[RMDB]
The record gives the reactivity of an RNA of 177 nucleotides to DMS. Conditions: 150 mM KOAc, 10 mM MgCl2 and 150 mM bicine (pH 8.5), 24 C. For DMS, 745 sequencing reads were counted. Values are in units of 0.01, from 0 to 300, in steps of 10.
RNA sequence: GGGAACGACUCGAGUAGAGUCGAAAAGUCCUUGCGUCGCGCCGUUAACACGGUAGGUUCUUCGCCAUGCAUCAGGUGGACCCCAACUUGACACGUCGCAAGGGACGAUUGGCGGCACUGGCUAUCGGAAGGUCGUGCAAUUCGUUGCACGACCUUCAAAAGAAACAACAACAACAAC
Reactivity to DMS in 0.01 (KOAc 150mM, MgCl2 10mM, bicine 150mM(pH8.5), 24C), signal-to-noise 1, nucleotides 027 to 126: g000u000c000c010u030u000g010c040g030u000c010g040c070g010c000c010g010u000u010a150a190c260a040c060g020g010u000a080g000g000u000u000c140u010u080c090g030c010c010a090u080g020c070a030u000c000a020g000g020u000g010g000a300c040c010c000c010a050a060c060u000u000g000a120c050a100c050g000u010c010g020c020a020a050g020g010g000a030c110g000a120u000u030g050g000c000g040g040c050a090c140u000g010g000c050u010a070u000c050g000